Record summary: The data come from the RNA Mapping Database (RMDB), library OK3TST. An RNA of 207 nucleotides, treated with 2A3 and read out base by base. The RNA was probed in 150 mM KOAc, 10 mM MgCl2 and 150 mM bicine (pH 8.5) at 24 C. Reactivities are given for positions 27 through 156.
[RMDB]
RNA sequence: GGGAACGACUCGAGUAGAGUCGAAAAGGGUCGAAAGCGGCGACGGCGACAAUGGCUGGAAGGGACCGGCUCAGAAGGUUUCUUUAAGUGGCUACGCCUUCUCGGGCGGGGGGCGCUCCAUCAUCCGCGUCGACGUGUCCCUCGAUAACGGCCGCUCCGAAUCCUCAUGAUUCGUCAUGAGGAUUCGAAAAGAAACAACAACAACAAC
Reactivity to 2A3 in 0.01 (KOAc 150mM, MgCl2 10mM, bicine 150mM(pH8.5), 24C), signal-to-noise 2, nucleotides 027 to 156: g000g000g000u050c020g030a190a110a030g020c020g020g050c010g020a020c020g020g060c030g000a010c060a020a170u270g030g020c110u030g000g040a040a060g030g000g040a030c010c010g030g010c020u000c050a010g030a040a010g000g010u050u120u070c020u020u260u080a210a080g050u060g090g000c050u080a030c030g000c000c000u080u060c070u050c050g070g020g020c080g000g000g000g000g000g000c020g000c030u000c020c000a120u140c010a080u030c020c030g040c090g060u010c000g020a010c020g020u020g050u040c020c030c000u020c080g060a060u030a050a010c050g060g010c000c000g020c000u000c000